[RMDB]
RNA sequence: GGGAACGACUCGAGUAGAGUCGAAAACGUCCCCGUCGUACAGAAUGGUAACAUAUCUCUCCAAAUAUCUGAGCUUGGGUAUACGGGGAAACCCAAGCCCUUGGGAAGAUUGGGUAUAUGGCUAAAUUACAUCGAUUGUACUUCGGUACAAUCGAAAGUACUUACAUACCUUCGGGUAUGUAAGUACAAAAGAAACAACAACAACAAC
Reactivity to DMS in 0.01 (KOAc 150mM, MgCl2 10mM, bicine 150mM(pH8.5), 24C), signal-to-noise 2, nucleotides 027 to 156: c030g000u010c000c000c010c070g010u030c120g010u000a190c060a090g010a170a060u020g020g010u000a090a180c060a070u000a060u000c020u000c020u000c020c030a050a110a210u000a050u000c130u010g000a140g020c030u000u000g030g010g010u000a110u000a090c050g030g000g050g000a140a110a110c010c000c000a010a060g010c010c000c000u000u020g020g020g010a110a020g000a050u000u000g020g010g020u010a050u000a060u000g030g010c030u000a020a080a150u020u010a090c100a160u010c000g010a030u000u000g000u000a010c000u000u000c280g030g020u000a000c000a000a020u000c010g000a000a020a070
Reactivity to 2A3 in 0.01 (KOAc 150mM, MgCl2 10mM, bicine 150mM(pH8.5), 24C), signal-to-noise 9, nucleotides 027 to 156: c020g080u040c010c000c010c010g070u070c020g010u070a110c060a140g140a150a170u140g080g010u110a160a020c010a020u060a050u030c060u000c020u030c070c020a080a120a100u190a130u080c070u090g010a020g040c000u000u000g010g000g010u040a050u010a110c050g000g000g000g000a030a020a010c000c000c000a000a000g000c000c000c000u030u070g040g010g020a050a040g020a070u040u070g020g000g010u040a020u010a020u040g010g010c030u060a100a110a100u190u110a080c050a100u030c010g000a000u000u000g010u000a000c000u010u050c200g050g000u000a000c000a000a000u000c000g000a000a000a000